[RMDB]
RNA sequence: GGGAACGACUCGAGUAGAGUCGAAAAAUCGGAGUCGGGGCGUCCAGGCACCUCGCCACGUAAAUGGUAUCCGAUCACGUCAGACAGGGUGCGCUUUUCGUAACGCGUCACAUUGACUGACCGCGUUUCCAUAAAGUUAAUAUCUGGGGAAGGACACCACAUCAGAGAUGUUCGCAUCUCUGAUGUGAAAAGAAACAACAACAACAAC
Reactivity to 2A3 in 0.01 (KOAc 150mM, MgCl2 10mM, bicine 150mM(pH8.5), 24C), signal-to-noise 3, nucleotides 027 to 156: a020u020c000g020g000a010g060u030c020g040g000g000g020c030g050u020c010c030a020g040g000c020a050c010c010u040c000g020c020c010a060c070g130u150a040a100a090u110g070g000u060a080u010c010c000g010a010u040c050a020c110g050u030c010a010g020a080c000a020g020g040g040u010g020c020g020c010u110u060u030u160c140g090u150a090a050c060g010c030g130u190c040a020c030a070u050u110g040a050c030u020g000a000c000c030g050c020g020u000u020u010c030c000a080u160a090a070a000g020u070u150a100a070u090a130u120c060u070g030g040g000g010a080a030g060g010a000c060a010c020
Reactivity to DMS in 0.01 (KOAc 150mM, MgCl2 10mM, bicine 150mM(pH8.5), 24C), signal-to-noise 1, nucleotides 027 to 156: a180u000c010g030g000a150g080u010c140g080g000g050g030c000g040u050c070c100a150g040g000c070a030c030c020u000c030g020c010c010a040c030g050u000a080a100a080u000g000g030u000a070u000c010c000g030a060u010c080a040c060g010u000c010a060g000a190c140a160g060g020g040u000g000c030g000c010u000u000u030u010c190g070u000a020a010c020g010c010g000u000c000a040c090a170u000u020g000a150c050u000g000a010c000c050g020c060g020u000u000u000c010c010a080u000a040a070a100g030u000u000a070a180u000a150u000c080u000g000g010g030g030a170a000g000g020a080c030a030c040